RNA sequence: GGGAACGACUCGAGUAGAGUCGAAAAGAUAUGGAUGUAUCAAAGGGAGAGCGUACUCGGAAACGAGUAUGGCUCGAAGAACUUUGAGUACAUCCUAAGUCAAAAUCGCGAAGUUCGCUUCGCGAAAUCCUAAUGUAAGCUUCGGCUUACAUUAGGAAAAAGAAACAACAACAACAAC
Reactivity to 2A3 in 0.01 (KOAc 150mM, MgCl2 10mM, bicine 150mM(pH8.5), 24C), signal-to-noise 2, nucleotides 027 to 126: g010a000u040a020u160g010g000a000u020g010u020a050u050c010a000a010a000g070g050g040a300g020a000g010c000g010u000a000c000u000c000g010g010a080a040a010c000g000a020g020u010a000u060g270g030c000u010c000g010a000a020g020a050a080c000u020u000u030g020a020g070u030a010c000a000u000c000c010u010a020a000g000u010c040a050a010a060a300u020c010g000c000g000a000a000g000u080u190c300g090c180u020u020c010g000c010g010a010a010a010
Reactivity to DMS in 0.01 (KOAc 150mM, MgCl2 10mM, bicine 150mM(pH8.5), 24C), signal-to-noise 3, nucleotides 027 to 126: g010a030u000a300u010g000g000a010u000g020u000a040u000c010a010a010a010g010g020g000a090g010a000g030c010g000u000a000c000u000c000g010g000a080a060a210c000g000a010g010u000a000u000g030g080c000u000c020g000a100a180g000a150a190c010u010u000u000g010a070g020u000a010c000a000u000c000c000u000a010a140g000u000c050a080a100a070a160u000c000g030c000g010a010a010g010u000u010c300g000c020u000u010c000g000c010g000a010a070a050
Structure probing data (2A3 and DMS) for a 177-nucleotide construct. It was measured as part of the RMDB library TTRDES. As a SHAPE reagent, 2A3 marks flexible, mostly unpaired nucleotides at the ribose 2'-OH. For 2A3, 6,274 sequencing reads were counted.